[RMDB]
RNA sequence: GGGAACGACUCGAGUAGAGUCGAAAACGGCAUCGAACACCAUGCCGCUCAUCUCGGCCAUCAGCUUGUGGAAGCGCGGGUAUUCGCUGUAGGGCACACCGCCGCCUUCCCGGAAGCAGCGAAUGACUGCGAGUACCACUUUCGAGUGGUACUCGCAAAAAGAAACAACAACAACAAC
Reactivity to DMS in 0.01 (KOAc 150mM, MgCl2 10mM, bicine 150mM(pH8.5), 24C), signal-to-noise 1, nucleotides 027 to 126: c040g010g010c020a020u020c050g010a140a060c160a090c160c080a070u000g000c020c000g020c010u000c160a150u020c050u000c070g010g000c050c000a050u000c040a070g000c060u000u000g060u000g010g010a050a030g000c170g010c020g020g000g050u030a040u000u000c030g020c020u000g010u000a050g010g010g000c020a100c090a080c010c010g020c050c040g000c040c000u000u000c010c000c010g000g050a110a080g020c000a000g000c000g000a000a020u000g010a180c170
Reactivity to 2A3 in 0.01 (KOAc 150mM, MgCl2 10mM, bicine 150mM(pH8.5), 24C), signal-to-noise 1, nucleotides 027 to 126: c000g000g000c010a040u030c090g110a190a060c030a030c220c020a030u050g000c000c000g000c010u070c030a090u040c010u000c000g030g010c020c020a110u090c040a020g020c050u040u080g080u120g100g070a050a040g050c020g010c030g100g090g070u050a050u030u040c010g000c000u020g050u070a050g010g020g070c050a020c020a010c070c020g040c040c000g010c000c020u100u070c010c010c020g010g000a050a050g000c050a010g030c000g020a000a010u010g040a070c120

An RNA of 177 nucleotides, treated with DMS and 2A3 and read out base by base. The DMS profile rests on 1,110 reads. It was measured as part of the RMDB library OK2TST. Conditions: 150 mM KOAc, 10 mM MgCl2 and 150 mM bicine (pH 8.5), 24 C. Values cover nucleotides 27 to 126.